The record gives the reactivity of an RNA of 177 nucleotides to 2A3 and DMS. Values cover nucleotides 27 to 126. For 2A3, 10,164 sequencing reads were counted. The RNA was probed in 150 mM KOAc, 10 mM MgCl2 and 150 mM bicine (pH 8.5) at 24 C. 2A3 adducts were read by reverse transcription with SuperScript II with manganese.
RNA sequence: GGGAACGACUCGAGUAGAGUCGAAAACGCAAUCUUUCGAGAUUGCGCUACUCGCCGGGAGUGCGUCAUUUAGCACGCUGGGGCUACGGCCUCACCCGGCGUCAACCGGUCGUAUUCGUACGACCGGGCUCCCUAUUAGGUUCGCCUAAUAGGGAGCAAAAGAAACAACAACAACAAC
Reactivity to 2A3 in 0.01 (KOAc 150mM, MgCl2 10mM, bicine 150mM(pH8.5), 24C), signal-to-noise 5, nucleotides 027 to 126: c000g000c000a000a000u000c000u030u100u160c230g050a010g000a020u010u000g000c000g000c000u060a060c010u010c010g010c000c010g010g000g010a160g060u040g010c000g070u080c150a200u180u190u300a050g000c060a000c000g000c030u030g000g010g000g010c010u020a030c230g100g000c010c000u020c010a020c010c010c000g010g030c000g010u010c010a040a070c010c000g000g000u000c000g000u010a020u040u060c150g020u030a000c000g010a000c000c010g000g000
Reactivity to DMS in 0.01 (KOAc 150mM, MgCl2 10mM, bicine 150mM(pH8.5), 24C), signal-to-noise 3, nucleotides 027 to 126: c010g010c010a010a010u000c000u000u000u020c170g010a020g010a010u000u000g000c010g010c040u000a080c070u000c000g020c000c000g000g000g000a090g010u000g000c010g010u000c170a140u000u010u010a120g000c060a010c000g030c180u000g010g000g010g000c000u000a070c210g050g010c000c000u010c010a140c000c000c000g000g000c000g000u000c050a060a300c000c000g000g000u000c000g000u000a010u000u030c230g020u000a010c000g000a010c000c000g020g000